An RNA of 207 nucleotides, treated with 2A3 and DMS and read out base by base. The 2A3 profile rests on 2,382 reads. For DMS the reverse transcriptase was MarathonRT. The reactions ran in a buffer of 150 mM KOAc, 10 mM MgCl2 and 150 mM bicine (pH 8.5), at 24 C. It was measured as part of the RMDB library M2RFPK.
[RMDB]
RNA sequence: GGGAACGACUCGAGUAGAGUCGAAAAACAUAUUACGAUAUGAUUCAGAUGGUGUCUUACUGGUUCGUACCAAGGGACAUAAUGGUUUCUUGUUUCCAACCAUAGAACAAGUGGCGAGCCUGAAUAAAAAACUGACUGCCGUUCGCGGCAGUCAGAAUCACUUAUUUCUGUUCGCAGAAAUAAGUGAAAAAGAAACAACAACAACAAC
Reactivity to 2A3 in 0.01 (KOAc 150mM, MgCl2 10mM, bicine 150mM(pH8.5), 24C), signal-to-noise 3, nucleotides 027 to 156: a000c030a010u110a050u110u170a060c090g070a050u040a030u130g070a050u060u120c060a040g080a140u070g050g060u060g020u050c020u080u090a130c050u040g050g010u010u080c050g030u040a070c020c000a020a020g010g000g000a000c020a040u170a090a130u110g080g020u020u030u020c010u020u030g010u040u030u030c020c000a020a020c020c000a040u040a160g080a060a040c030a100a040g020u040g110g000c020g030a020g010c020c000u020g020a030a020u090a100a070a020a010a010a040c000u000g000a000c000u000g010c010c000g010u040u060c250g000c000g090g000c000a000g000u000c000a000g000a000a000
Reactivity to DMS in 0.01 (KOAc 150mM, MgCl2 10mM, bicine 150mM(pH8.5), 24C), signal-to-noise 1, nucleotides 027 to 156: a080c000a100u000a060u000u000a100c060g000a120u010a090u000g010a140u000u000c010a140g000a080u000g000g010u000g000u000c020u000u000a150c080u000g020g020u000u000c120g000u020a080c030c010a050a110g000g020g010a070c090a080u010a090a090u010g000g010u000u000u000c020u010u000g010u000u000u000c020c040a050a050c070c060a030u020a070g020a100a040c030a050a120g010u020g000g000c000g010a120g050c070c030u010g020a040a090u010a000a050a080a110a120a150c000u000g000a030c000u000g000c020c000g000u000u000c300g020c030g000g010c020a010g000u010c010a000g020a030a070